Source: RMDB library OK3TST, as collected in RNAgym. Structure probing data (2A3 and DMS) for a 207-nucleotide construct.
[RMDB]
RNA sequence: GGGAACGACUCGAGUAGAGUCGAAAAUUCGGGGGUAGGUCUGAAAUACGACAGCGUGGAAUUCAAACUGGACGCCAACGGAGCGCUGGCUUCCACUUUGGUCUGCGACGAACCCCUAGUAGGCCCGACGUUCACUAACCAUAUCGGGCUCAAGUACUAUUCGUAUCUCGUUCGCGAGAUACGAAUAAAAAGAAACAACAACAACAAC
Reactivity to 2A3 in 0.01 (KOAc 150mM, MgCl2 10mM, bicine 150mM(pH8.5), 24C), signal-to-noise 1, nucleotides 027 to 156: u150u060c070g000g000g010g020g010u030a080g060g090u000c000u000g020a000a010a000u170a080c110g000a000c010a010g000c000g000u020g030g030a040a070u290u210c020a010a000a000c010u000g010g030a000c000g000c000c000a040a020c020g130g120a100g050c100g070c070u020g000g000c000u020u000c000c000a000c000u000u010u000g010g030u000c010u000g020c000g020a080c020g010a130a100c000c020c000c020u000a020g020u050a000g020g010c020c000c000g000a000c020g070u130u130c050a050c110u120a110a050c050c020a090u040a070u250c000g040g000g000c000u000c020a020a020g020u030a060c070
Reactivity to DMS in 0.01 (KOAc 150mM, MgCl2 10mM, bicine 150mM(pH8.5), 24C), signal-to-noise 1, nucleotides 027 to 156: u020u010c090g000g000g000g030g020u010a070g010g000u000c020u000g020a060a210a190u040a150c110g000a010c000a150g000c060g000u010g000g020a080a080u010u000c020a060a050a010c030u000g030g040a050c030g000c000c000a020a040c070g000g030a160g020c140g110c080u000g000g000c020u000u000c010c020a010c060u020u010u000g000g000u000c000u040g020c040g000a240c190g060a040a080c000c000c000c000u020a040g030u010a090g000g000c000c000c010g010a050c030g030u000u010c110a300c100u000a060a240c070c040a250u000a050u000c000g000g000g040c020u020c060a020a090g050u020a110c110
Overview
For DMS, 1,657 sequencing reads were counted. Reactivities are given for positions 27 through 156. 2A3 adducts were read by reverse transcription with SuperScript II with manganese.